Source: RMDB library M2RFPK, as collected in RNAgym.
Chemical mapping of a 207-nucleotide RNA with 2A3 and DMS.
For DMS the reverse transcriptase was MarathonRT.
[RMDB]
RNA sequence: GGGAACGACUCGAGUAGAGUCGAAAAUAGCGAAGUAGGAUUUUAUGCGUCAAGUGUUCACAGGCUGGGGAGUCGCCGUGAAACGAAAAGCAGAAAGCGUGCUGCUUACGAUAUAAGUUCCGCACCCAUAAGAAGUCUCUGUUCGCAGAGACUUCAAACUGAUAGCACGAUUCGUCGUGCUAUCAGUAAAAGAAACAACAACAACAAC
Reactivity to 2A3 in 0.01 (KOAc 150mM, MgCl2 10mM, bicine 150mM(pH8.5), 24C), signal-to-noise 5, nucleotides 027 to 156: u150a010g030c020g030a070a010g100u150a070g060g050a040u110u090u030u010a070u100g020c030g030u040c080a080a030g020u060g050u230u030c020a020c080a130g030g000c020u130g040g010g000g070a050g130u130c030g000c020c020g010u010g020a010a010a010c020g020a020a040a000a030g000c010a010g050a060a140a010g140c100g070u110g040c010u010g000c000u010u010a020c010g020a010u010a010u020a090a030g010u030u010c010c020g000c020a020c020c000c000a030u060a110a100g010a000a000g000u000c000u000c000u000g060u060u040c150g030c050a000g000a000g000a000c000u010u000c010a010a010
Reactivity to DMS in 0.01 (KOAc 150mM, MgCl2 10mM, bicine 150mM(pH8.5), 24C), signal-to-noise 2, nucleotides 027 to 156: u000a080g010c050g030a080a070g040u000a100g040g000a080u030u000u010u000a020u010g010c010g060u000c060a070a240g000u000g010u000u000c000a080c030a020g020g000c010u010g020g020g010g010a090g020u020c010g000c010c040g020u000g000a030a040a030c030g000a160a060a050a080g010c020a020g000a080a050a110g010c150g050u000g020c000u000g000c010u000u010a070c030g010a040u010a180u000a050a120g010u000u000c000c020g090c040a300c020c030c030a150u000a060a080g000a080a080g030u000c000u000c000u000g000u000u000c300g040c010a000g010a010g000a020c000u000u000c000a020a020
Values cover nucleotides 27 to 156.